[RMDB]
RNA sequence: GGGAACGACUCGAGUAGAGUCGAAAAUACGUGACCUUCGGGUCACGUAACCGGCGUUCCCAAGUCAAAAAGAGAGACGCAAUCUGGACAGCGGCCUUUUCGUAUGAGUUGCUUUCGAGCAACUCAACCUAAGCAGUUCUUUCGAGAACUGCUUAGGAAAAGAAACAACAACAACAAC
Reactivity to DMS in 0.01 (KOAc 150mM, MgCl2 10mM, bicine 150mM(pH8.5), 24C), signal-to-noise 2, nucleotides 027 to 126: u010a000c010g020u000g010a000c000c000u000u000c210g020g010g020u000c000a000c000g020u000a010a120c060c020g010g010c050g030u000u000c000c000c010a140a110g020u030c080a020a060a030a070a090g000a070g010a050g010a060c040g010c030a070a090u000c090u010g000g010a070c160a080g010c040g000g000c040c010u010u010u000u010c060g040u000a130u010g000a000g010u000u000g000c010u000u000u000c140g010a010g000c000a000a000c000u000c000a030a080
Reactivity to 2A3 in 0.01 (KOAc 150mM, MgCl2 10mM, bicine 150mM(pH8.5), 24C), signal-to-noise 2, nucleotides 027 to 126: u020a000c000g000u010g000a000c000c000u010u060c270g060g020g000u000c010a000c000g000u000a010a010c030c020g040g050c050g000u010u000c010c020c010a020a020g100u060c040a030a030a050a130a050g050a020g010a000g030a030c010g000c040a010a090u050c070u150g060g060a030c020a030g000c020g050g020c000c010u050u070u080u100c080g040u100a080u120g010a000g010u000u000g000c010u070u030u120c230g060a030g000c010a010a000c000u000c000a000a000
The record gives the reactivity of an RNA of 177 nucleotides to DMS and 2A3.
High 2A3 reactivity points to a flexible backbone, as in loops and unpaired stretches.
It was measured as part of the RMDB library M2PK50.